Notes: Structure probing data (DMS and 2A3) for a 177-nucleotide construct. Values are in units of 0.01, from 0 to 300, in steps of 10. The RNA was probed in 150 mM KOAc, 10 mM MgCl2 and 150 mM bicine (pH 8.5) at 24 C. DMS adducts were read by reverse transcription with MarathonRT. The DMS profile rests on 1,984 reads. Source: RMDB library OK2TRN, as collected in RNAgym.

RNA sequence: GGGAACGACUCGAGUAGAGUCGAAAACAGGAGGACAAGUAAGCAACUACAAGUACGUCAUACAGCUGAUGAGUAACAACAACGUGAUAGGAGCGUACUCUGGAUCAUUACAGUACAAGCAGGUGGACUCACCGUAUCACUUCGGUGAUACGGUGAGAAAAGAAACAACAACAACAAC
Reactivity to DMS in 0.01 (KOAc 150mM, MgCl2 10mM, bicine 150mM(pH8.5), 24C), signal-to-noise 3, nucleotides 027 to 126: c100a090g020g010a080g020g020a070c100a030a080g010u000a060a080g000c070a040a100c040u000a100c090a110a100g020u000a050c090g000u000c060a070u020a130c130a130g010c030u000g020a080u000g020a130g000u030a040a120c160a050a050c100a060a070c070g030u010g010a090u000a070g020g010a100g020c080g000u000a020c040u000c020u000g050g010a100u000c060a050u000u000a030c030a050g000u000a050c160a030a070g000c030a070g040g000u020g010g040a260
Reactivity to 2A3 in 0.01 (KOAc 150mM, MgCl2 10mM, bicine 150mM(pH8.5), 24C), signal-to-noise 2, nucleotides 027 to 126: c020a010g060g000a030g020g020a020c040a070a020g120u120a080a030g000c010a010a060c020u090a020c020a050a040g020u010a070c010g000u000c020a070u050a200c060a060g030c020u050g010a100u030g020a080g030u090a080a040c040a020a000c000a050a050c030g040u060g060a070u090a100g040g050a100g030c010g020u050a020c030u000c030u050g010g010a040u040c030a050u040u100a030c030a010g010u040a020c000a070a000g010c010a010g010g080u050g050g010a060